[RMDB]
RNA sequence: GGGAACGACUCGAGUAGAGUCGAAAAGAGUAAGGCGGCCACAGCAGAAGCGUUCAUGUCGCAGCCGCUGUCACAUUCUGGUGAAUCUGCGAAUUCUGCUGAAGAGCACGGAAUAGGACCGUGCAAAAGUACGUAAAUAGUUCGCUAUUUACGUACUAAAAGAAACAACAACAACAAC
Reactivity to DMS in 0.01 (KOAc 150mM, MgCl2 10mM, bicine 150mM(pH8.5), 24C), signal-to-noise 9, nucleotides 027 to 126: g010a100g000u020a070a120g020g010c020g010g010c040c300a140c040a010g000c030a010g010a030a050g010c100g010u010u030c180a100u030g010u020c020g000c010a110g000c110c020g010c030u000g010u010c050a030c060a130u020u030c150u020g010g010u020g010a050a070u020c050u010g000c040g000a070a110u010u000c000u000g000c010u010g010a160a080g000a170g010c000a010c010g000g010a110a120u030a150g020g010a120c000c000g010u000g000c000a020a030a070
Reactivity to 2A3 in 0.01 (KOAc 150mM, MgCl2 10mM, bicine 150mM(pH8.5), 24C), signal-to-noise 9, nucleotides 027 to 126: g100a010g100u130a090a040g040g010c010g010g010c020c020a080c010a040g000c010a010g010a030a010g030c080g090u110u130c180a120u250g110u160c020g000c010a010g010c010c010g010c030u010g010u020c000a020c010a090u230u150c090u220g070g000u040g020a030a050u040c030u060g010c010g020a030a060u040u010c010u010g010c010u020g030a060a020g040a020g040c000a000c000g000g040a060a080u120a140g060g060a030c000c000g000u000g000c000a050a000a000
Background: The record gives the reactivity of an RNA of 177 nucleotides to DMS and 2A3.